[RMDB]
RNA sequence: GGGAACGACUCGAGUAGAGUCGAAAAACGCGAACAAGAAGAAGCCGUAGCUACUUCAGGGCGCGGCGCACGAACUGGCGCUCGAUAUCCGCCUCGCUCGAGUAGGUUUCCCCGGGGAUCCCUCUUAACAUACUUAGGGGUUCGCCCCUAAGUAUGUAAAAGAAACAACAACAACAAC
Reactivity to DMS in 0.01 (KOAc 150mM, MgCl2 10mM, bicine 150mM(pH8.5), 24C), signal-to-noise 2, nucleotides 027 to 126: a090c030g000c010g000a050a060c030a130a080g000a060a070g020a170a120g010c000c300g000u020a080g020c000u000a090c040u010u000c060a110g020g020g020c020g000c010g020g020c000g000c030a060c090g000a080a110c080u010g000g000c030g000c010u020c040g000a050u010a060u010c090c000g010c070c020u010c010g010c030u010c000g020a030g000u010a020g010g020u000u010u010c000c000c000c040g010g000g010g010a070u020c040c020c010u000c040u000u000a170
Reactivity to 2A3 in 0.01 (KOAc 150mM, MgCl2 10mM, bicine 150mM(pH8.5), 24C), signal-to-noise 1, nucleotides 027 to 126: a000c030g020c000g020a110a020c020a140a120g070a040a000g040a070a010g050c010c070g240u170a110g010c030u070a070c030u100u110c090a090g050g060g000c010g020c000g000g000c010g000c010a100c080g170a300a050c090u110g050g030c030g000c010u030c050g060a020u030a070u230c070c030g030c010c020u000c000g000c000u000c010g010a010g000u030a030g160g000u020u050u030c000c000c000c010g020g020g020g020a010u050c020c000c020u030c060u040u050a010

Chemical mapping of a 177-nucleotide RNA with DMS and 2A3. The reactions ran in a buffer of 150 mM KOAc, 10 mM MgCl2 and 150 mM bicine (pH 8.5), at 24 C.